[RMDB]
RNA sequence: GGGAACGACUCGAGUAGAGUCGAAAAGGUGCCUCUGACAGCCGACGGCUGGUAUCCAGAUUACUUCCUGGGCUCUAACCAACCCGUUGUGUGAAUACGUGUGUAAAUAAAAAAAAAGUUGUACCCGUGCGUUUGGCGUGUGGUGUAUUGCGCAAUCAAGUGUCUGUGAAUUCGUUCACAGACACUUAAAAGAAACAACAACAACAAC
Reactivity to DMS in 0.01 (KOAc 150mM, MgCl2 10mM, bicine 150mM(pH8.5), 24C), signal-to-noise 1, nucleotides 027 to 156: g060g000u010g020c030c020u010c010u000g010a110c060a080g000c020c000g000a090c100g000g040c000u010g000g140u010a040u000c050c020a060g010a170u010u010a070c070u040u020c040c030u000g110g030g060c000u000c060u000a240a090c080c020a010a100c010c000c000g020u010u010g000u000g050u000g020a120a170u010a040c080g040u020g020u030g010u000a080a060a080u060a080a020a010a020a150a010a080a240a140g010u000u000g010u000a110c000c020c000g010u000g040c020g000u000u000u000g020g010c040g010u000g000u000g020g000u010g010u000a120u020u000g010c050g010c070a050a230u020c050

Notes
An RNA of 207 nucleotides, treated with DMS and read out base by base. DMS (dimethyl sulfate) methylates the pairing face of unpaired adenines and cytosines. Source: RMDB library OK3TST, as collected in RNAgym. Conditions: 150 mM KOAc, 10 mM MgCl2 and 150 mM bicine (pH 8.5), 24 C.